RNA sequence: GGGAACGACUCGAGUAGAGUCGAAAAAACAUUCCACUGUCGUCUAUCCUCGCGGAGCUGGUGUUUUCACAUGCUGGGAUCAUUAUACGUGGCAAACUUAUUGCAAUUGAGUAGGCGCUUUUGAAAAGCGCUAAUUACUGUUCGCAGUAAUUAGCGCAAAAGAAACAACAACAACAAC
Reactivity to 2A3 in 0.01 (KOAc 150mM, MgCl2 10mM, bicine 150mM(pH8.5), 24C), signal-to-noise 9, nucleotides 027 to 126: a000a000c070a080u070u020c030c010a040c040u060g070u120c020g010u000c020u040a090u070c010c020u040c010g030c030g050g030a060g020c030u030g020g040u030g040u030u040u060u090c070a090c040a070u150g020c030u040g010g050g040a060u030c010a020u040u200a080u030a140c070g030u040g040g000c030a050a050a050c080u160u120a080u110u200g030c040a070a160u090u100g010a030g020u050a030g020g000c020g000c030u050u050u040u080g100a090a090a020a020
Reactivity to DMS in 0.01 (KOAc 150mM, MgCl2 10mM, bicine 150mM(pH8.5), 24C), signal-to-noise 5, nucleotides 027 to 126: a070a020c150a190u000u000c010c010a120c060u020g010u010c020g000u000c030u010a060u020c050c020u000c070g010c090g000g000a100g000c070u020g030g010u000g000u010u010u020u000c060a070c060a070u010g000c060u020g010g010g010a080u010c040a030u010u020a110u030a090c080g000u000g020g000c040a030a040a090c130u020u020a070u030u000g000c090a080a060u010u000g000a080g020u000a070g000g020c080g020c040u000u020u000u020g010a050a050a080a120

An RNA of 177 nucleotides, treated with 2A3 and DMS and read out base by base. For 2A3 the reverse transcriptase was SuperScript II with manganese. The 2A3 profile rests on 19,444 reads.